[RMDB]
The record gives the reactivity of an RNA of 177 nucleotides to DMS and 2A3. For 2A3 the reverse transcriptase was SuperScript II with manganese. The DMS profile rests on 1,106 reads. The reactions ran in a buffer of 150 mM KOAc, 10 mM MgCl2 and 150 mM bicine (pH 8.5), at 24 C. It was measured as part of the RMDB library TTRDEL.

RNA sequence: GGGAACGACUCGAGUAGAGUCGAAAAGAUAUGGACGUGGUGCCAGCUAUAUGUCGGAAACGACAUUUAGCGGUAAUUCCACAGUCCUAAGUCAAAAGUGUAUUAGCUGUUCGCAGCUAAUACACAAGGCACUAUCAAUGUUCGCAUUGAUAGUGCCAAAAGAAACAACAACAACAAC
Reactivity to DMS in 0.01 (KOAc 150mM, MgCl2 10mM, bicine 150mM(pH8.5), 24C), signal-to-noise 1, nucleotides 027 to 126: g000a000u000a300u010g000g000a020c000g010u000g000g030u000g030c010c010a140g030c000u000a000u010a000u000g030u000c000g000g000a130a030a170c020g000a000c010a010u000u000u000a010g030c000g000g000u000a090a140u000u010c000c000a010c010a110g000u000c000c000u020a010a170g000u000c000a090a120a140a110g000u010g010u000a000u000u000a000g000c000u000g000u020u020c210g010c000a020g000c000u000a000a000u000a000c000a010c000a020a040
Reactivity to 2A3 in 0.01 (KOAc 150mM, MgCl2 10mM, bicine 150mM(pH8.5), 24C), signal-to-noise 1, nucleotides 027 to 126: g040a020u080a040u170g030g000a020c020g000u000g000g030u050g000c000c010a050g000c030u010a020u010a000u050g000u000c000g040g020a070a040a020c000g000a010c000a000u020u010u000a010g000c040g000g010u030a060a170u260u010c020c000a000c050a000g010u000c000c000u020a080a030g070u030c070a110a010a080a090g010u000g000u010a000u000u000a010g000c020u020g060u050u110c300g020c180a010g000c000u000a000a000u000a000c000a000c000a000a000